Chemical mapping of a 207-nucleotide RNA with 2A3 and DMS. Source: RMDB library OK3TST, as collected in RNAgym. The DMS profile rests on 5,543 reads. The reactions ran in a buffer of 150 mM KOAc, 10 mM MgCl2 and 150 mM bicine (pH 8.5), at 24 C. DMS adducts were read by reverse transcription with MarathonRT.

RNA sequence: GGGAACGACUCGAGUAGAGUCGAAAACUGGCGCCGUACCGCUGUUGGAACCAGUUGAGCAUCGCCGCAUAGUCCUCGAAGCCGUCGAGGCGGGCGAACUCGUCGCGGUUUCGCGGCAGGCCCUCGACGUUCCCCAGGGUGAUGCCGCUGGCGCGGAGCCCAUAGAGAAAUUCGUUUCUCUAUGGGCAAAAGAAACAACAACAACAAC
Reactivity to 2A3 in 0.01 (KOAc 150mM, MgCl2 10mM, bicine 150mM(pH8.5), 24C), signal-to-noise 4, nucleotides 027 to 156: c030u040g080g000c000g020c010c010g040u080a060c030c040g020c080u080g040u140u100g040g010a020a020c020c000a050g020u050u150g030a000g030c090a160u030c000g000c020c000g120c140a060u180a060g070u200c010c000u010c010g060a150a090g180c140c080g170u060c000g000a000g000g000c010g000g010g000c020g000a050a050c010u010c020g050u020c020g000c050g030g040u030u060u140c060g000c000g010g000c020a010g020g030c000c010c010u030c050g300a300c010g020u010u000c000c010c000c000a000g000g000g000u020g010a170u030g020c000c010g020c030u070g000g010c010g000c050g010g020a030
Reactivity to DMS in 0.01 (KOAc 150mM, MgCl2 10mM, bicine 150mM(pH8.5), 24C), signal-to-noise 2, nucleotides 027 to 156: c030u010g020g020c020g020c000c030g040u000a060c050c040g030c010u000g000u010u010g020g000a050a030c020c000a120g010u010u010g010a060g010c020a110u000c020g030c010c010g020c100a200u010a140g000u010c000c030u000c010g010a090a200g020c210c180g020u000c010g010a030g030g040c030g000g020g030c020g010a050a050c000u000c020g020u000c000g000c050g000g000u000u010u000c020g030c030g000g000c000a050g010g000c000c010c020u000c020g010a130c020g010u010u000c010c000c010c100a110g020g010g020u000g010a240u000g020c040c010g020c010u010g010g000c040g010c040g010g010a300